[RMDB]
Structure probing data (DMS and 2A3) for a 177-nucleotide construct.
Reactivities are rounded to 0.1 and cut off at 0 and 3.
For 2A3 the reverse transcriptase was SuperScript II with manganese.
For DMS, 1,048 sequencing reads were counted.
The reactions ran in a buffer of 150 mM KOAc, 10 mM MgCl2 and 150 mM bicine (pH 8.5), at 24 C.
The 2A3 profile rests on 1,661 reads.
RNA sequence: GGGAACGACUCGAGUAGAGUCGAAAACGGAUGCCCAGGUCGGACCGCGAGGAGGUGGAGAUCCCAUGCCGACCCGAAGAGGAAAGGAGGACACGGACGACAAACCGUAAGUUCUACUGCCCUUUAUAGUAAAUGGUAGGUUCGCCUACCAUUUACUAAAAGAAACAACAACAACAAC
Reactivity to DMS in 0.01 (KOAc 150mM, MgCl2 10mM, bicine 150mM(pH8.5), 24C), signal-to-noise 2, nucleotides 027 to 126: c160g020g030a090u020g000c020c010c040a100g040g030u010c070g000g000a120c030c020g020c140g010a180g010g020a080g020g010u000g010g000a200g000a100u000c050c000c000a150u000g020c030c010g010a060c010c020c060g000a060a100g030a020g010g000a070a300a020g000g040a070g010g040a050c060a050c050g000g020a070c040g010a110c280a060a090a040c030c010g040u000a070a050g000u010u000c010u000a080c010u020g020c300c010c010u030u020u010a150u000
Reactivity to 2A3 in 0.01 (KOAc 150mM, MgCl2 10mM, bicine 150mM(pH8.5), 24C), signal-to-noise 1, nucleotides 027 to 126: c060g090g020a070u100g010c020c020c020a020g020g030u020c000g000g000a060c060c020g010c040g100a090g060g040a020g020g100u090g030g030a070g010a070u050c000c000c020a000u100g000c010c000g010a020c000c020c010g060a080a050g050a040g020g010a130a000a060g030g010a020g010g000a010c010a000c000g060g080a030c050g020a040c080a040a050a010c000c000g020u020a130a040g010u000u000c020u030a050c000u040g020c000c000c000u020u030u070a200u050